The data come from the RNA Mapping Database (RMDB), library OK1LIB.
An RNA of 177 nucleotides, treated with DMS and 2A3 and read out base by base.
Reactivities are given for positions 27 through 126.
The reactions ran in a buffer of 150 mM KOAc, 10 mM MgCl2 and 150 mM bicine (pH 8.5), at 24 C.
Reactivities are rounded to 0.1 and cut off at 0 and 3.
DMS adducts were read by reverse transcription with MarathonRT.

[RMDB]
RNA sequence: GGGAACGACUCGAGUAGAGUCGAAAAGUGACGCCGCACCAGACUGUCUACGAUGCCAGUGUGCAGUAUGAGUUCUGGUACUCCGCCACGCAACUGGCGACUGCCGCCGAUAUUCAGUCAAAAGCACCCCUACCACGCUGUUCGCAGCGUGGUAGGGAAAAGAAACAACAACAACAAC
Reactivity to DMS in 0.01 (KOAc 150mM, MgCl2 10mM, bicine 150mM(pH8.5), 24C), signal-to-noise 1, nucleotides 027 to 126: g000u000g000a060c020g000c000c100g030c090a170c020c270a060g000a060c030u000g010u060c080u030a050c060g000a120u080g000c030c000a070g110u090g000u000g000c060a050g000u000a120u000g000a300g010u000u000c140u000g000g000u090a120c070u050c000c010g000c000c000a020c090g000c110a050a080c030u000g000g000c070g000a100c000u000g000c020c070g000c030c000g000a220u000a040u000u000c120a150g000u000c140a100a020a010a220g060c130a150c100
Reactivity to 2A3 in 0.01 (KOAc 150mM, MgCl2 10mM, bicine 150mM(pH8.5), 24C), signal-to-noise 3, nucleotides 027 to 126: g040u010g010a050c060g000c030c040g010c040a000c000c000a050g040a050c030u050g080u170c010u050a040c020g110a060u220g040c010c010a060g030u030g040u080g150c000a010g000u110a050u120g010a020g060u190u140c060u080g110g000u000a020c010u000c000c010g060c050c000a020c020g050c000a020a060c060u030g060g000c000g000a010c020u060g000c010c080g030c020c040g030a020u010a080u150u100c030a000g080u020c030a080a030a040a050g030c030a100c030